[RMDB]
RNA sequence: GGGAACGACUCGAGUAGAGUCGAAAAAGUUAUGGCUAAUCACUUUUAUAGAAUGUAUCAAAUUGCUAUUGAGGAAGCAAAACAGAAGGAAUUAAAUGAAGAAGAGGGGGCGGUGUUCUUUGACUAACUACACUAAUGCAAAGGCGUUAGUUGAGGACAGUUACGCGUCAUUCGUGACGCGUAACUGAAAAGAAACAACAACAACAAC
Reactivity to DMS in 0.01 (KOAc 150mM, MgCl2 10mM, bicine 150mM(pH8.5), 24C), signal-to-noise 2, nucleotides 027 to 156: a130g030u000u010a020u000g030g010c030u010a080a120u010c040a050c030u030u030u000u000a280u000a130g000a100a100u020g030u020a120u000c100a040a090a160u000u000g020c020u000a100u000u010g030a140g040g000a040a030g020c040a050a040a050a060c060a120g000a070a040g000g000a120a070u010u000a060a030a120u000g000a100a080g000a060a060g010a140g020g010g010g000g010c040g010g030u000g020u000u000c000u000u000u000g030a050c050u000a010a060c010u000a060c050a120c060u010a070a060u010g010c120a070a200a110g010g000c090g000u000u000a010g000u010u010g000a010g020g000a090
Reactivity to 2A3 in 0.01 (KOAc 150mM, MgCl2 10mM, bicine 150mM(pH8.5), 24C), signal-to-noise 3, nucleotides 027 to 156: a000g020u030u030a040u060g030g010c030u050a060a060u050c020a010c020u030u070u050u030a100u010a050g070a060a030u060g030u090a070u090c050a070a090a140u120u060g010c020u060a040u130u110g010a030g030g020a020a000g020c010a000a060a010a020c010a010g060a060a000g040g020a010a000u100u070a100a060a060u090g040a010a060g010a030a010g010a030g030g000g000g010g000c030g000g030u000g020u040u000c010u040u020u040g020a000c010u000a040a000c010u090a040c060a020c060u070a150a060u140g050c090a250a060a080g100g000c010g010u000u010a010g000u050u030g010a000g000g020a030

Chemical mapping of a 207-nucleotide RNA with DMS and 2A3. DMS adducts were read by reverse transcription with MarathonRT. Values cover nucleotides 27 to 156.